[RMDB]
RNA sequence: GGGAACGACUCGAGUAGAGUCGAAAAAGUCACCUAUUACGAUAGGUGACAUUUGAACCAGCGAACAAUUCAGUUGCGAGAUUCGAGGUUUCAGUCUGAAUCAUAGUAGCCAUUACGAUGGCUGCAACUCACUCCCGACUGUUCGCAGUCGGGAGAAGCAUGAGAAUAGGUUCGCCUAUUCUCAUGCAAAAGAAACAACAACAACAAC
Reactivity to DMS in 0.01 (KOAc 150mM, MgCl2 10mM, bicine 150mM(pH8.5), 24C), signal-to-noise 1, nucleotides 027 to 156: a080g020u000c010a030c010c010u000a000u010u000a090c230g040a190u000a000g030g000u000g000a010c000a020u000u010u000g040a080a250c030c030a110g010c050g000a040a090c040a130a080u000u000c050a130g010u000u020g000c030g020a150g010a080u000u010c000g020a260g000g040u000u000u000c020a070g000u000c030u000g000a030a070u010c130a090u000a040g000u000a020g000c000c020a020u000u000a120c160g000a120u000g000g010c000u020g010c020a000a050c040u000c060a090c000u000c000c000c020g000a030c010u000g000u020u000c300g010c000a020g010u010c000g000g000g000a010g020a010a020
Reactivity to 2A3 in 0.01 (KOAc 150mM, MgCl2 10mM, bicine 150mM(pH8.5), 24C), signal-to-noise 6, nucleotides 027 to 156: a010g010u000c000a000c000c000u000a000u040u060a090c270g030a010u010a000g010g000u010g000a000c000a010u010u030u110g020a020a010c000c010a000g170c010g000a000a000c010a050a130u040u000c000a000g010u000u010g000c000g000a000g000a000u010u010c000g010a020g020g050u100u210u300c040a040g110u070c010u000g010a010a000u040c060a050u070a070g010u010a000g020c010c000a010u050u050a060c240g130a020u020g000g010c000u000g000c000a010a060c050u120c090a030c000u000c000c000c000g000a000c000u020g050u060u080c230g000c120a000g000u000c000g000g000g000a000g000a010a010